[RMDB]
RNA sequence: GGGAACGACUCGAGUAGAGUCGAAAAGAUAUGGACCAGGUAUUGGACGAGGAUCUUACUCGGAAACGAGUAAGGGAGUCCGGUACUGGUCCUAAGUCAAAACCAGUUGCACUUCGGUGCAACUGGAGUGUCAAGCAUAGUUCGCUAUGCUUGACACAAAAGAAACAACAACAACAAC
Reactivity to DMS in 0.01 (KOAc 150mM, MgCl2 10mM, bicine 150mM(pH8.5), 24C), signal-to-noise 2, nucleotides 027 to 126: g000a050u000a300u000g000g010a010c000c000a030g010g030u000a010u000u010g010g020a020c000g010a130g020g000a060u010c000u000u000a000c000u000c000g050g010a120a120a230c010g020a020g010u000a010a000g000g010g010a040g000u000c000c000g000g000u000a000c000u000g010g020u000c010c000u000a000a080g000u020c020a060a080a200a190c010c000a020g000u000u010g000c000a000c000u000u000c190g020g000u000g010c000a010a000c010u010g010g010a020
Reactivity to 2A3 in 0.01 (KOAc 150mM, MgCl2 10mM, bicine 150mM(pH8.5), 24C), signal-to-noise 3, nucleotides 027 to 126: g030a010u070a020u170g010g010a010c000c010a030g270g140u090a030u030u070g010g000a010c070g040a300g040g000a010u010c000u010u000a000c000u020c000g000g030a050a080a050c010g000a000g020u000a010a010g020g000g000a010g000u000c000c000g020g020u020a010c000u010g010g010u000c000c000u020a010a000g020u010c040a020a020a060a150c000c000a000g000u010u000g000c000a010c020u000u080c300g160g000u000g000c000a000a000c000u010g000g010a070